Overview:
This 207-nucleotide RNA was probed chemically with DMS and 2A3. The DMS profile rests on 4,787 reads. It was measured as part of the RMDB library OK3TST.

[RMDB]
RNA sequence: GGGAACGACUCGAGUAGAGUCGAAAAGUACUUCUCCCAAAGCUGGAGAGGGAAGGAAGAGAAUCCCAUUUAUGUCCUGGGAAAGCAAGAUUCUCCUUCUGAUGUGGGAGUCUUAUUUUGGGGAGUGGGAAUAGAACAAUUGUCCCCUCAGAGGACACCAUAAUAAUAUGUUCGCAUAUUAUUAUGGAAAAGAAACAACAACAACAAC
Reactivity to DMS in 0.01 (KOAc 150mM, MgCl2 10mM, bicine 150mM(pH8.5), 24C), signal-to-noise 2, nucleotides 027 to 156: g020u000a120c020u010u000c010u010c010c000c010a050a090a110g050c070u020g000g010a070g000a020g020g000g000a060a030g010g020a110a040g020a100g000a110a190u000c000c000c000a200u000u000u010a080u010g000u020c000c010u000g040g010g000a050a040a070g020c100a050a050g000a080u000u010c010u000c000c010u000u010c170u010g000a110u000g020u030g030g010g010a050g040u000c020u020u020a070u000u000u000u000g010g000g010g010a090g010u020g000g020g000a070a130u010a120g010a080a110c070a080a130u000u010g010u000c000c000c000c000u010c070a090g010a050g010g020a020c020a170
Reactivity to 2A3 in 0.01 (KOAc 150mM, MgCl2 10mM, bicine 150mM(pH8.5), 24C), signal-to-noise 6, nucleotides 027 to 156: g020u020a030c020u010u000c010u060c010c010c010a220a250a030g090c220u120g020g010a050g000a030g010g000g010a030a010g070g040a060a040g040a020g070a110a070u020c000c010c020a010u040u090u040a130u090g040u000c010c000u060g050g040g000a080a040a010g110c090a020a010g000a050u060u020c020u060c030c000u120u100c120u180g150a220u160g030u180g030g000g000a010g010u000c010u030u060a100u030u100u050u060g050g020g030g010a020g030u170g020g030g000a060a040u110a110g130a110a030c050a100a100u120u150g050u030c010c000c020c000u000c030a100g020a050g030g000a000c020a010